Overview
The record gives the reactivity of an RNA of 177 nucleotides to DMS. Values cover nucleotides 27 to 126. It was measured as part of the RMDB library OK2TST. Conditions: 150 mM KOAc, 10 mM MgCl2 and 150 mM bicine (pH 8.5), 24 C. Values are in units of 0.01, from 0 to 300, in steps of 10.
[RMDB]
RNA sequence: GGGAACGACUCGAGUAGAGUCGAAAACUGGAAGCCGGUUGUCCCCACCGCCGAGGGCAAAAAGGCGGUGCUCUGGACGUCGGGUUGGACCCCCCGCUACCAGGGCGAGACGAUCUAUCUGGCGCGCCGAGCUAUAGGGGUUCGCCCCUAUAGCUCGAAAAGAAACAACAACAACAAC
Reactivity to DMS in 0.01 (KOAc 150mM, MgCl2 10mM, bicine 150mM(pH8.5), 24C), signal-to-noise 2, nucleotides 027 to 126: c050u010g010g010a090a200g000c050c050g040g000u000u010g020u000c000c020c180c040a050c010c040g010c000c000g000a120g000g030g000c140a050a050a070a150a160g000g030c030g040g010u000g000c170u000c040u010g000g010a200c150g000u010c100g020g000g000u000u010g000g010a180c080c060c040c000c040c000g020c020u010a120c070c020a010g020g020g000c060g000a060g010a090c080g000a050u000c050u000a130u030c030u000g030g000c200g000c120g020c080